[RMDB]
RNA sequence: GGGAACGACUCGAGUAGAGUCGAAAAGAUAUGGAUCCUUGUUGGGAGCUCCUCGGAAACGAGAGAGCGAAGAACAAUGGGAUCCUAAGUCAAAAUCAAUUCAUCAACUUCGGUUGAUGAAUUGAAAGAAAGAUGUAUGGUUCGCCAUACAUCUUUCAAAAGAAACAACAACAACAAC
Reactivity to DMS in 0.01 (KOAc 150mM, MgCl2 10mM, bicine 150mM(pH8.5), 24C), signal-to-noise 6, nucleotides 027 to 126: g010a030u000a300u000g000g000a000u010c000c000u010u010g040u000u000g010g000g020a300g000c010u000c000c010u000c000g000g000a110a080a190c000g010a010g000a150g010a000g020c000g000a100a200g010a040a060c000a030a050u000g020g010g000a010u000c000c000u000a010a070g010u010c040a100a080a090a130u000c000a000a010u000u000c000a000u000c000a000a000c000u000u010c210g030g010u000u000g000a010u000g000a000a010u000u000g000a010a080a090
Reactivity to 2A3 in 0.01 (KOAc 150mM, MgCl2 10mM, bicine 150mM(pH8.5), 24C), signal-to-noise 5, nucleotides 027 to 126: g020a010u070a040u160g000g010a000u010c020c000u080u220g030u020u010g060g010g020a020g000c000u000c010c000u000c000g020g030a070a050a050c020g010a010g010a020g000a010g110c000g020a030a020g050a010a000c020a030a090u090g060g010g000a010u000c000c000u000a080a030g050u010c030a010a010a000a300u020c000a000a000u000u000c000a000u010c000a000a010c000u050u040c260g190g000u000u000g000a000u010g000a000a000u000u000g010a010a000a000